[RMDB]
RNA sequence: GGGAACGACUCGAGUAGAGUCGAAAAGGCCACUUGGUGCUCAUAACACCUCUAUGUCAGGUGAACACUAUUGUCAUCCCCAAAUUACAGAUGGGGAAAGUGAGCCAAAUGUCCAUGCUAGUAAGAGCAGACGAUGUAAAUUCGUUUACAUCGUCUGAAAAGAAACAACAACAACAAC
Reactivity to 2A3 in 0.01 (KOAc 150mM, MgCl2 10mM, bicine 150mM(pH8.5), 24C), signal-to-noise 8, nucleotides 027 to 126: g000g000c010c010a000c010u010u040g030g000u030g020c020u020c080a090u090a180a050c020a020c070c000u000c040u130a300u250g190u210c070a000g030g000u000g020a040a010c030a000c030u090a080u130u230g150u100c030a050u030c000c000c000c000a010a070a030u150u080a090c060a040g120a140u070g010g000g010g000a010a000a010g010u020g010a030g000c000c000a030a100a020u040g010u000c010c010a030u080g030c020u050a150g080u140a180a070g050a020g170
Reactivity to DMS in 0.01 (KOAc 150mM, MgCl2 10mM, bicine 150mM(pH8.5), 24C), signal-to-noise 9, nucleotides 027 to 126: g010g010c020c010a020c020u010u000g000g010u000g010c100u000c080a070u010a100a180c090a030c020c020u000c070u010a120u010g010u030c190a040g000g010u000g010a080a140c040a050c100u010a070u010u010g000u000c160a130u000c000c000c000c010a030a060a090u010u010a150c250a090g000a130u000g010g000g000g010a010a020a010g000u000g010a100g010c010c010a020a070a060u000g010u000c010c010a090u000g020c070u000a100g010u010a070a190g010a090g010

The record gives the reactivity of an RNA of 177 nucleotides to 2A3 and DMS. 2A3 adducts were read by reverse transcription with SuperScript II with manganese. For DMS, 12,036 sequencing reads were counted. 2A3 is a SHAPE reagent: it acylates the 2'-hydroxyl of flexible nucleotides of all four kinds. Source: RMDB library OK2TST, as collected in RNAgym.